RNA sequence: GGGAACGACUCGAGUAGAGUCGAAAAGCGUACUACAUAGACAUGCUGAGAAUGGAAGCGAUAAGGUAGCUCCCAAAUAGGAGCUACCUUUUGACGCUUCCAGGACCAGCAACAGCUAUGUAUCGCAAACCCCCCAUUUGUUCGCAAAUGGGGGGAACAACCUAAUCACCUUCGGGUGAUUAGGUUGAAAAGAAACAACAACAACAAC
Reactivity to DMS in 0.01 (KOAc 150mM, MgCl2 10mM, bicine 150mM(pH8.5), 24C), signal-to-noise 2, nucleotides 027 to 156: g020c010g020u010a110c120u010a010c040a040u020a020g010a070c090a300u010g000c000u020g000a040g020a300a280u000g010g000a000a010g050c000g020a140u000a020a000g000g020u000a070g000c000u020c000c000c030a030a130a300u010a060g000g000a020g010c010u000a010c000c000u000u010u000u000g030a300c060g000c020u000u020c010c000a000g020g020a300c110c010a000g000c010a030a030c090a240g010c000u000a000u000g010u010a060u000c000g020c020a040a050a250c010c010c010c020c000c000a010u000u000u000g010u020u000c300g000c030a000a010a000u000g000g000g010g060g010g000a000a010
Reactivity to 2A3 in 0.01 (KOAc 150mM, MgCl2 10mM, bicine 150mM(pH8.5), 24C), signal-to-noise 2, nucleotides 027 to 156: g000c010g050u090a140c020u010a000c040a000u000a000g030a060c040a050u030g000c000u030g000a010g020a080a010u000g000g010a000a000g000c020g040a060u000a040a000g030g000u000a000g000c000u010c000c050c030a240a260a050u300a020g000g020a000g000c010u000a000c000c050u000u010u000u020g000a000c000g000c000u010u020c000c000a000g010g030a010c010c000a050g000c000a020a010c040a000g010c000u020a000u010g000u000a030u300c000g000c000a050a070a070c000c000c000c000c000c000a020u000u010u000g050u020u080c120g000c220a000a010a000u000g000g000g000g000g000g020a000a000

Record summary: Chemical mapping of a 207-nucleotide RNA with DMS and 2A3. For 2A3 the reverse transcriptase was SuperScript II with manganese. The DMS profile rests on 1,909 reads. Values cover nucleotides 27 to 156. Values are in units of 0.01, from 0 to 300, in steps of 10. The data come from the RNA Mapping Database (RMDB), library RNAMAK.